[RMDB]
RNA sequence: GGGAACGACUCGAGUAGAGUCGAAAAGCGUACUACACAACGUCACCAGGCUCAACAGCUUGAAGCUUUCCCAAAUAGGAAAGUGGAGGAGACAUGAGCCUGCAAGUCGUUGUGUAUCGCAAACCGUACGUAAUUAGUUCGCUAAUUACGUACGGAAUGUAAGACGUGUCUUCGGACACGUCUUACAAAAAGAAACAACAACAACAAC
Reactivity to 2A3 in 0.01 (KOAc 150mM, MgCl2 10mM, bicine 150mM(pH8.5), 24C), signal-to-noise 2, nucleotides 027 to 156: g000c010g050u080a100c100u050a000c110a000c000a010a000c000g000u010c020a040c130c040a050g000g000c000u010c010a010a060c040a160g080c000u020u030g020a000a000g000c000u000u000u050c040c020c000a200a300a200u300a050g000g020a020a020a000g000u030g000g040a080g160g020a010g100a030c060a210u050g000a000g010c000c020u000g000c010a160a170g010u010c000g000u000u000g000u000g000u000a000u080c000g000c050a100a000a000c000c000g020u000a000c000g000u010a000a000u010u000a030g060u060u040c290g000c260u000a000a000u000u000a010c000g010u000a000c000g000g000a020a000